An RNA of 177 nucleotides, treated with 2A3 and read out base by base. The RNA was probed in 150 mM KOAc, 10 mM MgCl2 and 150 mM bicine (pH 8.5) at 24 C. For 2A3, 603 sequencing reads were counted. Source: RMDB library OK1LIB, as collected in RNAgym. As a SHAPE reagent, 2A3 marks flexible, mostly unpaired nucleotides at the ribose 2'-OH.
RNA sequence: GGGAACGACUCGAGUAGAGUCGAAAAAGAAAGAUAUUAUACGAUAUCAAAAUGACCUCCUGUUUUCAUCAGAUGAUAUCAUUUCUCGACAUUUUGAUACACCUCUAAAUUUUCAAUUAUUGCACAAAUUAGUGCACUCGUUCGCGAGUGCACUAAUAAAAGAAACAACAACAACAAC
Reactivity to 2A3 in 0.01 (KOAc 150mM, MgCl2 10mM, bicine 150mM(pH8.5), 24C), signal-to-noise 2, nucleotides 027 to 126: a030g170a000a020a010g080a030u050a030u050u070a140u010a100c030g040a080u020a010u010c000a030a040a000a010u080g100a120c000c040u080c040c000u100g190u140u000u080u210c070a060u090c010a030g010a080u060g050a030u050a020u120c090a040u000u100u080c020u000c000g140a110c020a040u000u020u000u120g040a030u030a030c030a060c090c010u020c050u140a180a140a230u050u040u050u130c000a000a000u130u120a070u240u170g040c040a080c010a100a140